An RNA of 207 nucleotides, treated with 2A3 and read out base by base. Conditions: 150 mM KOAc, 10 mM MgCl2 and 150 mM bicine (pH 8.5), 24 C. Reactivities are given for positions 27 through 156.
RNA sequence: GGGAACGACUCGAGUAGAGUCGAAAAACGAGCUGGUGCCUACUACGGUAGGAACCAGCUCGAGGGCCUUCUGGUCGUGUUCUUGGCCACCCAGGAGGUCCUUCGCAAGAGGUGGACGGCCAAGAAAAAAAGGACAGUGGGUUCGCCCACUGUCCAAGAUUGUAAUGACCUUCGGGUCAUUACAAUCAAAAGAAACAACAACAACAAC
Reactivity to 2A3 in 0.01 (KOAc 150mM, MgCl2 10mM, bicine 150mM(pH8.5), 24C), signal-to-noise 1, nucleotides 027 to 156: a000c010g010a000g010c020u000g010g030u030g010c000c000u000a000c000u020a020c180g100g000u000a000g000g000a010a010c000c020a000g000c000u000c000g000a000g000g010g010c010c020u000u010c000u020g000g040u140c100g020u050g020u040u020c000u010u000g030g000c000c000a000c000c000c000a000g000g000a000g000g000u000c000c010u010u020c010g010c030a000a040g030a060g070g100u140g070g070a060c070g020g000c000c000a000a000g030a030a010a000a020a000a000a000g000g000a000c000a000g000u000g010g040g000u040u090c130g110c000c000c010a000c000u000g000u000c000c000a000a000